[RMDB]
The record gives the reactivity of an RNA of 177 nucleotides to DMS and 2A3. For 2A3 the reverse transcriptase was SuperScript II with manganese. The data come from the RNA Mapping Database (RMDB), libraries RFM100 and RFMREP. Conditions: 150 mM KOAc, 10 mM MgCl2 and 150 mM bicine (pH 8.5), 24 C.
RNA sequence: GGGAACGACUCGAGUAGAGUCGAAAACAUGUAUUUACAUGUAUUGCAAAUCCACAUAUUCGUUGUGUUUGCACCACAACAAUAUGAGUGGGACACUAUAAUUUAUAAUAAUAGUGCGAAUACUGCGCAGUAGAAGAAUCUUCGGAUUCUUCUACUGAAAAGAAACAACAACAACAAC
Reactivity to DMS in 0.01 (KOAc 150mM, MgCl2 10mM, bicine 150mM(pH8.5), 24C), signal-to-noise 7, nucleotides 027 to 126: c000a020u010g010u000a130u030u020u040a020c000a010u000g000u000a080u020u040g010c080a070a120a110u010c000c000a170c000a020u000a000u000u000c230g020u000u000g010u000g010u000u010u040g000c240a170c300c000a020c000a000a000c000a010a000u000a000u000g000a070g000u000g000g000g000a250c000a020c000u000a000u010a090a060u010u020u050a140u030a140a110u030a090a040u000a020g000u000g010c050g000a110a100u020a050c100u000g010c130g010
Reactivity to 2A3 in 0.01 (KOAc 150mM, MgCl2 10mM, bicine 150mM(pH8.5), 24C), signal-to-noise 9, nucleotides 027 to 126: c010a000u020g030u080a200u110u300u300a020c010a010u020g030u030a160u030u200g040c030a020a010a110u030c000c000a010c000a010u010a000u020u030c140g000u000u000g000u000g020u020u090u200g080c070a030c040c000a000c010a000a000c000a000a000u010a010u010g060a060g090u040g010g020g020a020c010a000c020u010a020u030a130a170u100u180u170a270u110a210a080u170a070a020u010a030g000u000g010c030g060a060a030u100a150c060u080g060c040g000